[RMDB]
RNA sequence: GGGAACGACUCGAGUAGAGUCGAAAAGAUAUGGAUCCAGAAAGCAUCGAUCGCAGUGUAUAGUAACAAGUGGUCGGAAACGACCACCGCCCUAUACACUGCGGGAGCUUUCCUGGAUCCUAAGUCACCUACGUACAGACUUCGGUCUGUACGUAGGAAAAGAAACAACAACAACAAC
Reactivity to DMS in 0.01 (KOAc 150mM, MgCl2 10mM, bicine 150mM(pH8.5), 24C), signal-to-noise 2, nucleotides 027 to 126: g020a050u000a300u030g000g000a000u010c000c000a060g000a040a010a010g030c010a300u000c260g000a140u010c010g020c000a010g020u000g010u000a000u000a010g020u000a100a140c240a190a040g000u000g010g030u000c000g000g030a130a150a250c020g010a000c000c000a010c020c060g010c300c110c000u000a000u000a020c000a000c000u010g000c010g010g010g010a030g000c010u000u000u000c240c040u000g010g010a000u000c000c020u000a000a100g020u000c020a300
Reactivity to 2A3 in 0.01 (KOAc 150mM, MgCl2 10mM, bicine 150mM(pH8.5), 24C), signal-to-noise 1, nucleotides 027 to 126: g070a000u100a020u160g010g000a010u030c000c000a000g000a000a000a000g020c050a230u300c070g210a120u110c000g050c010a000g000u000g040u000a010u000a030g180u190a250a190c160a300a050g010u010g000g000u000c000g040g040a080a120a090c000g000a000c000c000a000c000c000g050c000c010c000u020a000u000a000c040a020c010u000g000c010g000g000g020a020g000c000u050u000u000c160c010u000g000g000a000u000c000c000u010a040a000g020u010c010a040
An RNA of 177 nucleotides, treated with DMS and 2A3 and read out base by base.
For DMS the reverse transcriptase was MarathonRT.
2A3 adducts were read by reverse transcription with SuperScript II with manganese.
The 2A3 profile rests on 2,319 reads.